[RMDB]
RNA sequence: GGGAACGACUCGAGUAGAGUCGAAAAUGUGUUCCAGGGCGACUCAUCGAAGGGCUUUACCGGCCUGUUCAAUGCUGCUGGCGUGACCCCGGUUGCUGCGACCAAUGGUGAUUGGCUGAAUGGCACCACUACUCCGGAUGAGAUUCUGGCCGACCUGCUAGAUUGGUGAUUUCGAUCACCAAUCUAGAAAAGAAACAACAACAACAAC
Reactivity to DMS in 0.01 (KOAc 150mM, MgCl2 10mM, bicine 150mM(pH8.5), 24C), signal-to-noise 2, nucleotides 027 to 156: u020g000u010g040u000u000c020c030a140g030g010g010c040g030a080c020u010c050a040u000c040g010a110a200g010g000g010c020u000u010u000a080c170c160g050g000c020c060u000g030u000u000c080a110a100u000g010c070u000g020c010u000g000g040c020g050u010g000a210c020c030c000c040g000g020u010u000g000c030u000g000c010g000a140c030c030a030a050u000g000g010u000g010a140u000u010g010g050c020u000g000a080a100u000g010g040c050a060c030c030a040c050u000a040c010u000c030c090g030g000a060u010g010a170g000a180u000u010c030u000g010g020c020c000g000a080c020c010u000g010
Reactivity to 2A3 in 0.01 (KOAc 150mM, MgCl2 10mM, bicine 150mM(pH8.5), 24C), signal-to-noise 3, nucleotides 027 to 156: u110g020u010g030u070u030c020c010a010g010g000g010c030g040a070c040u000c050a020u030c060g070a050a050g040g010g000c040u070u060u130a090c060c030g040g000c010c020u050g120u110u080c060a050a050u080g010c010u020g020c010u010g000g010c020g050u060g060a110c010c000c000c000g000g030u050u040g030c030u020g010c000g070a100c010c010a080a080u050g020g030u100g030a160u160u100g050g010c030u020g070a080a070u170g060g010c010a020c050c040a040c020u130a060c030u040c020c050g070g030a070u050g010a040g000a030u070u000c040u070g060g010c020c010g010a030c000c000u000g010